[RMDB]
RNA sequence: GGGAACGACUCGAGUAGAGUCGAAAAAUCGGACGCGCCGGAUGGCGGUCAGGAGGACAUUACCAGAGGUGAAACGGAAUCUUAUUGCGUAGUUGCAGAUUGCGGCAAAAUCACUUCAUUUUGCGCAAAAAUGAGGCGAUUUCGAUCGCCUCAUUUUAAAAGAAACAACAACAACAAC
Reactivity to DMS in 0.01 (KOAc 150mM, MgCl2 10mM, bicine 150mM(pH8.5), 24C), signal-to-noise 1, nucleotides 027 to 126: a100u000c020g020g010a100c010g030c060g000c020c020g030g020a090u010g040g030c060g000g010u000c030a030g030g030a130g030g000a110c280a080u000u060a050c080c020a100g000a070g020g000u000g000a040a090a140c030g010g010a060a040u000c060u010u000a100u040u020g020c010g040u000a130g050u000u010g000c030a030g000a080u010u000g010c020g020g000c010a030a000a050a030u000c150a090c170u020u030c090a240u000u000u010u020g040c100g010c160a000
Chemical mapping of a 177-nucleotide RNA with DMS.
DMS (dimethyl sulfate) methylates the pairing face of unpaired adenines and cytosines.
Values cover nucleotides 27 to 126.
Values are in units of 0.01, from 0 to 300, in steps of 10.